Source: RMDB library M2RFPK, as collected in RNAgym. The record gives the reactivity of an RNA of 207 nucleotides to 2A3. The 2A3 profile rests on 959 reads.
RNA sequence: GGGAACGACUCGAGUAGAGUCGAAAAAGCGAUGAUACGUCAUCGCAACGAUUGCCUGAUCGUAAAACCGGAGACGGCCGUGGCCGCGACCACGUAAAAAAGCGUAACGUGGUCUACGGACCACGAAAAAAGCGCGGAACGUUCGCGUUCCGCGCAAGUACUUAAUAGGCUUCGGCCUAUUAAGUACAAAAGAAACAACAACAACAAC
Reactivity to 2A3 in 0.01 (KOAc 150mM, MgCl2 10mM, bicine 150mM(pH8.5), 24C), signal-to-noise 1, nucleotides 027 to 156: a000g000c030g020a000u000g000a000u000a080c200g080u020c010a010u000c000g000c010a000a000c020g020a020u070u070g010c000c000u050g030a060u020c010g000u120a020a060a050a070c030c010g040g000a080g020a020c060g000g030c010c000g010u000g000g050c100c000g000c000g000a000c000c000a010c010g010u050a020a010a020a000a020a000g050c000g040u050a050a020c000g000u000g000g000u050c020u020a080c300g010g020a020c000c020a000c010g000a000a000a000a000a000a000g020c030g000c010g000g000a000a030c010g010u080u120c230g000c000g120u000u000c030c010g000c050g000c010a000a000